[RMDB]
RNA sequence: GGGAACGACUCGAGUAGAGUCGAAAAGCAAUAAACCGUGCGAUAGCAUCUCGCGUGAAGUGGUGCGAGUUAACUCUCGCCCUGUCAGGCGAUAUCCCAUCCGGUUACUUUGCGGGCUGAGUCGCCAGGGCUAUGCGAUGUUCGCAUCGCAUAGCCCAAAAGAAACAACAACAACAAC
Reactivity to 2A3 in 0.01 (KOAc 150mM, MgCl2 10mM, bicine 150mM(pH8.5), 24C), signal-to-noise 1, nucleotides 027 to 126: g060c030a000a040u070a230a060a000c000c020g030u100g090c060g070a110u040a000g000c000a080u020c000u000c030g030c060g150u020g030a100a070g140u130g090g100u180g030c020g000a000g000u060u030a130a100c250u020c000u020c110g040c000c000c000u000g070u040c040a040g070g150c020g000a000u020a000u080c010c030c000a010u010c030c000g050g030u050u070a140c060u030u070u090g040c090g000g000g020c050u110g000a010g050u040c010g060c040c010a040
The record gives the reactivity of an RNA of 177 nucleotides to 2A3. Reactivities are given for positions 27 through 126.